[RMDB]
RNA sequence: GGGAACGACUCGAGUAGAGUCGAAAACGACCCCUCGGUAAAACUCGGAACGGUUAAUAGUUCCACUGGGAGCACAACGCGUCCCAACGACCUUGCAGACCACUCGGUUGAUGCGCUAAAUGCCACAACCAUCGACGCAUCCGAUACCGUCACGGGGACGUAGGGAAAAAUUCGUUUUUCCCUACGUAAAAGAAACAACAACAACAAC
Reactivity to 2A3 in 0.01 (KOAc 150mM, MgCl2 10mM, bicine 150mM(pH8.5), 24C), signal-to-noise 3, nucleotides 027 to 156: c050g110a070c010c000c000c000u020c030g020g000u010a080a130a080a100c030u010c040g010g030a060a050c030g010g040u040u120a100a040u080a210g040u040u020c020c030a040c030u000g000g000g010a010g010c020a050c050a240a300c210g010c040g300u050c010c000c000a010a030c040g010a010c000c020u030u060g000c060a030g030a110c000c010a040c080u080c060g010g010u010u010g050a300u020g010c070g010c100u080a200a170a020u240g000c010c000a030c010a000a010c010c000a030u100c050g070a050c080g020c070a040u010c010c000g010a010u010a030c000c000g030u090c080a030c130g000g000g000g010
Reactivity to DMS in 0.01 (KOAc 150mM, MgCl2 10mM, bicine 150mM(pH8.5), 24C), signal-to-noise 2, nucleotides 027 to 156: c020g000a140c030c020c010c010u000c020g010g000u000a030a070a100a130c070u000c010g010g000a190a070c010g010g020u020u010a100a100u000a130g020u000u000c000c090a100c130u000g020g000g010a290g000c070a160c050a070a040c140g000c030g000u000c000c000c020a010a170c130g020a120c020c040u000u000g010c070a100g040a130c060c040a130c090u000c060g040g030u010u000g000a040u000g000c050g040c000u000a030a090a080u020g020c050c040a090c100a020a050c130c010a070u000c010g010a040c020g020c050a040u020c020c040g000a210u000a000c010c010g020u010c070a180c050g010g000g000g000